[RMDB]
RNA sequence: GGGAACGACUCGAGUAGAGUCGAAAAGUAAUAGAUAGUGGGAUGACGAGAAAGGGUGCGCUGAUAUCCCGCACGAAUGCUAGCAGUAAAUAGAAUAGCGCUCCUAAUACAACUAGCAACAAAAGGAUAAGGUAUCGUGAUGUCAAUCACAUUGCGAGCGUAUGCACUACUUCGGUAGUGCAUACGCAAAAGAAACAACAACAACAAC
Reactivity to 2A3 in 0.01 (KOAc 150mM, MgCl2 10mM, bicine 150mM(pH8.5), 24C), signal-to-noise 1, nucleotides 027 to 156: g000u020a000a080u160a270g190a080u060a040g000u000g000g000g030a050u070g060a070c010g000a050g050a160a030a000g050g000g000u000g000c000g000c000u000g000a000u000a020u020c020c000c070g000c010a030c020g060a100a020u240g000c030u030a070g000c020a020g020u090a040a040a110u080a070g070a020a030u030a050g040c040g000c000u000c000c000u000a050a000u050a000c000a010a000c010u020a000g040c050a010a060c020a130a020a050a040g040g000a040u020a020a000g020g020u020a000u090c020g030u000g060a000u000g110u100c080a080a140u150c000a000c000a060u000u110g020c000g000a110